[RMDB]
This 207-nucleotide RNA was probed chemically with 2A3.
RNA sequence: GGGAACGACUCGAGUAGAGUCGAAAAAGGGCAGGCCGCCCGGGACCGGAGGCCGACGUUGGGGAAGAACGCGGGCCGGUCCGGCGGACGAUGGCGCGAACUCAAAGCGAACCAACGAGCCAAGCGCCUGCCCUGCUGGAUCUGCCAGCAGGCGAUCCACUUACCCCGUUUUCGAACGGGGUAAGUGAAAAGAAACAACAACAACAAC
Reactivity to 2A3 in 0.01 (KOAc 150mM, MgCl2 10mM, bicine 150mM(pH8.5), 24C), signal-to-noise 2, nucleotides 027 to 156: a000g010g010g000c000a000g020g000c090c020g000c030c080c060g030g010g000a010c020c020g010g010a070g080g260c030c000g020a210c030g030u060u070g110g060g030g000a050a060g030a080a000c010g010c010g010g010g040c020c020g000g010u000c010c000g000g020c010g010g010a020c010g060a070u080g010g000c000g000c020g050a090a060c030u080c190a080a060a000g030c040g060a090a110c020c000a030a090c060g000a040g030c020c000a150a030g000c020g000c080c010u000g000c010c010c000u000g000c030u000g050g000a030u070c050u190g060c000c000a080g020c020a030g150g040c020g020a010u020c010
Source: RMDB library OK3TST, as collected in RNAgym.
High 2A3 reactivity points to a flexible backbone, as in loops and unpaired stretches.
Conditions: 150 mM KOAc, 10 mM MgCl2 and 150 mM bicine (pH 8.5), 24 C.